[RMDB]
RNA sequence: GGGAACGACUCGAGUAGAGUCGAAAAAGUGUCAAUAAAUAUAAGUGAGAAAAAGGGUGUAAUUAAAGUUCCUGUACAAUGUGCAGAGCUAAAAAUAAAUCAUGGGAUAGUUGGAGAUGCACAUGCAAGUGAGUGAUUUAUUCGUAAAUCACUCACUAAAAGAAACAACAACAACAAC
Reactivity to 2A3 in 0.01 (KOAc 150mM, MgCl2 10mM, bicine 150mM(pH8.5), 24C), signal-to-noise 4, nucleotides 027 to 126: a010g090u100g020u090c030a050a050u090a150a110a000u170a090u070a170a050g050u050g080a070g130a040a080a020a010a050g050g040g010u060g000u040a110a130u110u060a200a110a000g020u040u020c030c010u020g000u030a040c170a140a150u190g010u000g010c030a010g000a000g030c030u090a040a070a040a050a030u210a050a110a000u110c070a060u110g040g000g070a060u050a110g050u030u040g050g020a040g010a020u050g040c000a020c020a070u110g060c010a050
Reactivity to DMS in 0.01 (KOAc 150mM, MgCl2 10mM, bicine 150mM(pH8.5), 24C), signal-to-noise 4, nucleotides 027 to 126: a060g010u010g000u000c030a050a070u040a070a090a080u030a100u020a060a080g020u000g000a080g000a030a050a060a080a070g010g010g000u000g000u000a060a070u020u020a050a100a160g000u000u000c080c000u010g010u010a060c120a090a050u010g010u010g010c000a020g010a050g000c050u000a000a060a040a030a080u020a040a050a060u020c050a080u020g000g010g010a050u010a060g020u000u000g000g010a070g000a030u000g000c030a020c030a030u020g000c140a060